[RMDB]
RNA sequence: GGGAACGACUCGAGUAGAGUCGAAAAUUUGGUUUGCUGGCUGGUGCAGUGCCUGAGGGAGUAAGAGCCCUGUUGUUGUCAGAUAGUGUCUUACUCCCUCAGGCACAUCUCCAGCGAGUUCAGUCGCCGAGACUUGUAAGUUCGCUUACAAGUCUCGAAAAGAAACAACAACAACAAC
Reactivity to DMS in 0.01 (KOAc 150mM, MgCl2 10mM, bicine 150mM(pH8.5), 24C), signal-to-noise 1, nucleotides 027 to 126: u000u010u000g010g000u000u000u010g010c020u000g010g020c010u000g000g000u000g000c220a080g010u000g000c020c000u020g020a010g010g000g020a040g000u010a020a030g000a300g010c030c070c000u010g010u000u000g000u000u020g010u010c130a090g010a060u000a030g010u000g000u000c000u000u000a030c020u000c000c000c000u000c020a000g000g000c000a000c000a010u000c020u000c010c020a050g000c000g000a030g010u010u000c140a110g000u010c070g020c190